[RMDB]
RNA sequence: GGGAACGACUCGAGUAGAGUCGAAAACUUUCGUUGCCAAUCAUGACACAGAUAUAAUAUGGAACAAGUAUCCAGCAUAUGCGUUCAUAUUGACAUAUGAGGGACAGCCAGUAAUAUUCUACAGGGAAUCAUUCCUGGAGUUCGCUCCAGGAAUGAUAAAAGAAACAACAACAACAAC
Reactivity to 2A3 in 0.01 (KOAc 150mM, MgCl2 10mM, bicine 150mM(pH8.5), 24C), signal-to-noise 1, nucleotides 027 to 126: c030u010u200u220c040g050u020u080g060c000c000a010a090u030c020a040u110g010a040c010a000c000a110g160a100u130a000u030a170a170u150a050u110g000g010a050a040c030a160a000g000u050a090u010c020c020a010g020c010a050u010a030u030g080c080g030u120u060c010a030u050a050u130u050g000a010c040a010u110a040u030g010a050g000g040g020a000c050a040g040c000c000a010g010u060a000a050u010a080u190u030c010u030a060c040a060g090g030g030a000
Reactivity to DMS in 0.01 (KOAc 150mM, MgCl2 10mM, bicine 150mM(pH8.5), 24C), signal-to-noise 2, nucleotides 027 to 126: c020u000u000u020c080g080u000u000g020c000c000a080a050u000c100a060u000g020a060c060a030c040a040g020a090u000a050u010a060a060u000a070u000g040g010a050a060c090a110a210g020u010a040u000c030c020a060g000c150a070u000a040u010g020c140g000u000u010c070a080u000a050u000u000g020a060c060a030u000a030u010g010a030g010g000g000a110c100a090g030c020c020a010g010u000a060a070u000a060u000u010c060u000a050c140a060g000g010g000a110